An RNA of 177 nucleotides, treated with DMS and read out base by base. High DMS reactivity at an A or C suggests that its Watson-Crick edge is free. For DMS, 894 sequencing reads were counted. The reactions ran in a buffer of 150 mM KOAc, 10 mM MgCl2 and 150 mM bicine (pH 8.5), at 24 C. It was measured as part of the RMDB library OK2TST.
[RMDB]
RNA sequence: GGGAACGACUCGAGUAGAGUCGAAAAGGCAGGGCGACCAGCCCAGCCGCCGAAGAGACAUUGACCAAAUGCCCACCCCGGCCGGCGGCCAGGAUCGGCGGCACGAACGUCUCGAUGAUGUGGAUCAUGACUACUGACGUUUCGACGUCAGUAGUCAAAAAGAAACAACAACAACAAC
Reactivity to DMS in 0.01 (KOAc 150mM, MgCl2 10mM, bicine 150mM(pH8.5), 24C), signal-to-noise 2, nucleotides 027 to 126: g020g030c020a020g030g040g020c010g030a200c230c140a230g010c010c020c000a100g040c000c010g020c020c020g010a050a120g010a090g000a010c050a040u000u030g000a110c130c090a060a130a060u010g040c000c000c020a160c050c000c000c050g010g020c000c000g020g000c120g040g040c010c000a040g010g000a130u000c160g020g020c040g020g020c010a170c170g000a040a040c050g010u000c040u000c080g030a060u000g010a130u020g000u000g050g000a100u000c090a150